RNA sequence: GGGAACGACUCGAGUAGAGUCGAAAAGCUCUGCGAGACAGAUCGAACAACAAAGAGAGAUCGAAAAUCUUAGAGGAGAGAACGAAUCUGUCGGCUUCACUAGGACAUUGUCGAUCAGAGGUCCAAAGAGCAUUCAUGGGUUCGCCUAUGGAUGCUCAAAAGAAACAACAACAACAAC
Reactivity to DMS in 0.01 (KOAc 150mM, MgCl2 10mM, bicine 150mM(pH8.5), 24C), signal-to-noise 9, nucleotides 027 to 126: g010c020u000c000u000g010c050g010a300g000a020c030a080g000a010u010c010g000a300a220c040a070a100c270a070a140a110g010a060g010a300g000a020u000c010g000a070a080a110a200u000c010u010u000a010g000a070g000g010a020g000a150g010a090a090c030g010a060a110u030c120u030g010u000c020g000g000c010u000u000c000a060c010u010a000g000g000a020c110a080u020u010g000u000c000g000a190u000c010a030g000a030g000g000u010c020c020a040a090a090
Reactivity to 2A3 in 0.01 (KOAc 150mM, MgCl2 10mM, bicine 150mM(pH8.5), 24C), signal-to-noise 9, nucleotides 027 to 126: g030c000u000c000u010g020c020g010a030g000a020c010a020g020a020u010c020g050a070a050c040a060a030c040a030a300a010g110a010g010a000g000a010u010c020g050a050a040a020a050u000c000u010u010a010g000a030g040g010a010g000a000g030a080a040c040g020a040a100u140c100u140g110u040c030g060g010c000u010u010c010a010c030u010a000g000g010a000c020a100u060u120g020u010c000g000a010u020c000a000g010a010g020g030u000c000c000a020a040a020
Structure probing data (DMS and 2A3) for a 177-nucleotide construct. 2A3 adducts were read by reverse transcription with SuperScript II with manganese. It was measured as part of the RMDB library OK1LIB. The reactions ran in a buffer of 150 mM KOAc, 10 mM MgCl2 and 150 mM bicine (pH 8.5), at 24 C. The 2A3 profile rests on 75,808 reads.